[RMDB]
RNA sequence: GGGAACGACUCGAGUAGAGUCGAAAACGGUCAAAGUACAGGCGGGUACGGCAGAGUGCGGCCGCAUUACUUUUGUAAUCAGCACUCCGGCCGCAGCCUCCGUCGCCGCCUCGACGGAGGGGACCGGAUCGCUACUGGACUUCGGUCCAGUAGCGAUAAAAGAAACAACAACAACAAC
Reactivity to DMS in 0.01 (KOAc 150mM, MgCl2 10mM, bicine 150mM(pH8.5), 24C), signal-to-noise 1, nucleotides 027 to 126: c020g020g020u010c020a030a060a110g040u000a080c060a040g000g000c050g010g000g060u010a040c020g000g020c160a060g020a040g000u000g000c030g010g030c110c080g050c160a040u000u010a000c010u000u030u000u010g010u000a030a030u010c080a090g010c080a070c050u010c130c210g010g000c000c000g000c030a090g020c050c000u000c000c000g010u000c080g010c010c010g010c010c020u000c050g040a030c060g000g010a120g030g000g000g000a020c030c020g000g020
Chemical mapping of a 177-nucleotide RNA with DMS.
For DMS, 1,297 sequencing reads were counted.
Reactivities are given for positions 27 through 126.
The data come from the RNA Mapping Database (RMDB), library OK2TRN.
Conditions: 150 mM KOAc, 10 mM MgCl2 and 150 mM bicine (pH 8.5), 24 C.